[RMDB]
RNA sequence: GGGAACGACUCGAGUAGAGUCGAAAAGAUAUGGACGAACGUGAGUUGGGAGUUGCACCUCGGAAACGAGGUGUCAACUUUGAUCAACUCUCGUCCUAAGUCAAAGUACGCUCUUCGGAGCGUACAAGUGGAUAAGAUAGUUCGCUAUCUUAUCCACAAAAGAAACAACAACAACAAC
Reactivity to 2A3 in 0.01 (KOAc 150mM, MgCl2 10mM, bicine 150mM(pH8.5), 24C), signal-to-noise 6, nucleotides 027 to 126: g030a020u080a050u160g020g000a000c020g000a230a050c300g190u140g120a010g010u010u010g060g050g040a090g000u010u010g000c010a000c000c000u010c000g020g020a050a070a040c010g010a010g000g000u010g000u030c010a000a000c000u030u040u100g050a050u030c010a000a010c000u000c000u000c000g010u010c000c000u030a150a010g040u020c040a180a000a000g000u000a000c000g000c000u000c010u050u140c300g170g000a000g000c000g000u000a000c000a000a010
Reactivity to DMS in 0.01 (KOAc 150mM, MgCl2 10mM, bicine 150mM(pH8.5), 24C), signal-to-noise 7, nucleotides 027 to 126: g000a050u000a300u010g010g000a030c010g010a060a120c280g030u000g000a010g010u000u000g010g010g000a010g010u000u000g000c000a000c000c000u000c000g010g000a080a080a210c010g020a010g000g010u000g010u010c020a000a010c000u000u000u020g000a150u010c010a010a010c000u000c000u000c010g010u000c000c010u000a050a130g000u000c040a100a130a180g000u000a000c000g010c010u000c000u000u020c220g020g000a010g000c000g000u000a000c000a030a090

This 177-nucleotide RNA was probed chemically with 2A3 and DMS. Source: RMDB library TTRDES, as collected in RNAgym. Conditions: 150 mM KOAc, 10 mM MgCl2 and 150 mM bicine (pH 8.5), 24 C.